[RMDB]
RNA sequence: GGGAACGACUCGAGUAGAGUCGAAAAGACCGCUGAAUGCGGAAGUACUAGAUCAACUAGAAAGUAGAUAAAUACAAAAGCUACGUCUCGAAACUAGUUGAUCUAGUCCAGUCGAGACGUAGCAAGACGGACUAUGGUCGUUCGCGACCAUAGUCCGAAAAGAAACAACAACAACAAC
Reactivity to 2A3 in 0.01 (KOAc 150mM, MgCl2 10mM, bicine 150mM(pH8.5), 24C), signal-to-noise 1, nucleotides 027 to 126: g230a010c000c000g090c050u080g300a170a150u300g000c000g000g020a020a000g060u100a150c000u000a000g020a000u040c010a000a010c000u000a000g050a130a080a000g150u140a090g000a210u190a110a150a000u140a090c060a000a180a000a020g000c000u000a000c020g040u000c000u010c000g080a200a100a100c140u060a000g010u020u020g000a000u000c000u000a000g000u000c010c010a000g000u000c000g000a030g000a080c000g010u000a000g000c030a000a000g010a000